Conditions: 150 mM KOAc, 10 mM MgCl2 and 150 mM bicine (pH 8.5), 24 C. The record gives the reactivity of an RNA of 177 nucleotides to DMS and 2A3. For 2A3 the reverse transcriptase was SuperScript II with manganese. Values cover nucleotides 27 to 126.

RNA sequence: GGGAACGACUCGAGUAGAGUCGAAAAGCGGGCUUGGAAUUAAGAUGCUGUGGGCCCGCAUCAGGCGCGUUCCAGCUUGCGAUCACGGGGAUCUCUACACGCAAGCAAGUAUAGCCAUCAGCACUUACCACCAUACUUCAUUCGUGAAGUAUGGUGGAAAAGAAACAACAACAACAAC
Reactivity to DMS in 0.01 (KOAc 150mM, MgCl2 10mM, bicine 150mM(pH8.5), 24C), signal-to-noise 3, nucleotides 027 to 126: g010c010g010g000g020c020u020u030g030g020a110a110u050u000a140a090g010a150u010g020c000u000g020u010g000g000g040c040c010c000g000c010a000u020c070a040g010g010c030g000c130g000u030u000c010c020a190g010c000u000u000g000c020g000a080u040c210a180c300g000g000g000g010a140u030c030u040c060u010a120c240a110c040g000c030a020a030g020c000a080a060g010u030a110u000a120g030c030c000a080u000c030a040g010c000a030c030u000u000a190
Reactivity to 2A3 in 0.01 (KOAc 150mM, MgCl2 10mM, bicine 150mM(pH8.5), 24C), signal-to-noise 4, nucleotides 027 to 126: g000c000g010g000g000c020u050u080g090g070a050a040u150u080a120a070g090a170u110g010c020u040g030u030g050g030g010c000c020c000g000c000a000u030c040a010g040g000c030g010c020g050u040u000c000c000a020g010c000u010u000g000c010g090a110u100c040a030c140g000g020g000g080a100u070c090u000c020u130a020c020a010c050g000c000a010a010g000c030a000a020g040u060a040u070a080g010c020c000a070u050c000a020g010c020a000c020u020u050a020